Structure probing data (2A3 and DMS) for a 177-nucleotide construct. The data come from the RNA Mapping Database (RMDB), library OK1LIB. The RNA was probed in 150 mM KOAc, 10 mM MgCl2 and 150 mM bicine (pH 8.5) at 24 C.
RNA sequence: GGGAACGACUCGAGUAGAGUCGAAAAGGGAAGCUUAAAUCAGAAUUUGGUCAAACACACGAGAGUGUGAGCUUUUAUUUCUUGAUGGAGUAUUUCAGAGAAAUGUCCCUCCAAGACGACAAGGACAGUUGUUACGCCAGUUCGCUGGCGUAACAACAAAAGAAACAACAACAACAAC
Reactivity to 2A3 in 0.01 (KOAc 150mM, MgCl2 10mM, bicine 150mM(pH8.5), 24C), signal-to-noise 2, nucleotides 027 to 126: g100g040g000a000a010g060c000u150u080a200a140a050u060c050a040g010a030a150u050u000u110g060g000u110c080a000a140a000c020a010c000a000c000g040a030g010a050g150u000g000u000g020a000g010c000u170u020u090u140a080u080u090u090c010u000u090g010a010u040g080g030a020g040u070a240u150u120u040c000a010g040a000g080a130a090a010u180g000u010c000c000c000u030c040c000a030a000g090a020c110g010a010c040a160a070g050g060a000c040a000
Reactivity to DMS in 0.01 (KOAc 150mM, MgCl2 10mM, bicine 150mM(pH8.5), 24C), signal-to-noise 1, nucleotides 027 to 126: g000g010g000a000a080g000c000u070u000a030a070a070u000c000a050g000a130a000u040u030u020g010g000u040c020a130a080a270c000a050c000a000c080g020a140g000a250g000u000g000u000g000a040g120c030u000u080u000u000a080u000u000u000c000u040u000g000a000u000g000g070a080g000u000a090u000u030u000c050a000g000a050g000a050a070a140u010g000u000c000c000c000u000c130c000a080a080g000a220c000g000a030c060a140a180g010g000a050c240a090
For DMS the reverse transcriptase was MarathonRT. For 2A3 the reverse transcriptase was SuperScript II with manganese. The DMS profile rests on 904 reads. For 2A3, 646 sequencing reads were counted.